[RMDB]
Source information
Chemical mapping of a 177-nucleotide RNA with 2A3 and DMS.
RNA sequence: GGGAACGACUCGAGUAGAGUCGAAAAGACGCGAGAGACGCGAGACGCGCAAUGGCAGAAGCCGCAAUAGAUGAUACGACGCAAGAGGCAAGACGGAGAGCGCGCAACUUGCGUCAAUAACCAAGAACACUACUGCGUAUUUCGAUACGCAGUAGUGAAAAGAAACAACAACAACAAC
Reactivity to 2A3 in 0.01 (KOAc 150mM, MgCl2 10mM, bicine 150mM(pH8.5), 24C), signal-to-noise 6, nucleotides 027 to 126: g070a020c060g020c060g040a050g010a000g030a130c030g030c010g030a050g030a080c040g020c000g010c040a040a100u110g060g000c030a010g060a230a020g040c020c010g010c020a030a100u080a120g110a060u110g030a030u090a120c090g000a010c010g010c010a020a020g020a010g080g000c050a070a020g070a060c040g050g030a100g010a020g090c020g010c010g000c000a020a010c000u000u010g000c000g000u000c000a000a020u030a000a000c040c010a020a040g050a100a020
Reactivity to DMS in 0.01 (KOAc 150mM, MgCl2 10mM, bicine 150mM(pH8.5), 24C), signal-to-noise 3, nucleotides 027 to 126: g000a080c060g000c000g000a150g030a140g000a170c040g010c010g020a050g000a070c020g040c050g020c060a100a080u000g000g000c090a080g000a170a180g020c030c020g000c170a080a060u020a080g000a120u040g000a150u010a010c070g010a050c090g000c020a030a010g000a060g030g000c040a070a250g000a200c120g010g010a120g000a090g000c020g000c280g010c030a070a010c000u030u010g010c000g000u000c000a030a020u020a080a170c040c030a080a050g010a080a080
It was measured as part of the RMDB library OK1LIB. For 2A3, 8,189 sequencing reads were counted.